[RMDB]
RNA sequence: GGGAACGACUCGAGUAGAGUCGAAAACGCAGCGCAGCAAUUCAAGAAACCAUGGGCCAGGUCAUUAAUUAAUGGUGUGUUGCGAAAUUACCUCAGGCAACGGGAAGAUCUCGAGCUGGCCUUGUCGUAUAUGCCGACACUUCGGUGUCGGCAUAUAAAAAGAAACAACAACAACAAC
Reactivity to DMS in 0.01 (KOAc 150mM, MgCl2 10mM, bicine 150mM(pH8.5), 24C), signal-to-noise 1, nucleotides 027 to 126: c050g000c000a020g000c000g000c000a030g030c070a050a170u000u000c170a020a060g000a090a210a140c100c130a020u010g000g000g000c010c020a020g010g000u010c020a090u010u000a030a070u020u010a130a080u000g010g010u010g010u010g010u000u000g010c020g000a040a040a110u000u000a110c050c030u000c100a100g010g000c120a030a060c140g010g000g010a060a140g010a090u010c030u000c110g020a070g030c030u000g000g000c000c010u000u000g020u000c170g010
The record gives the reactivity of an RNA of 177 nucleotides to DMS.
The RNA was probed in 150 mM KOAc, 10 mM MgCl2 and 150 mM bicine (pH 8.5) at 24 C.
It was measured as part of the RMDB library OK2TST.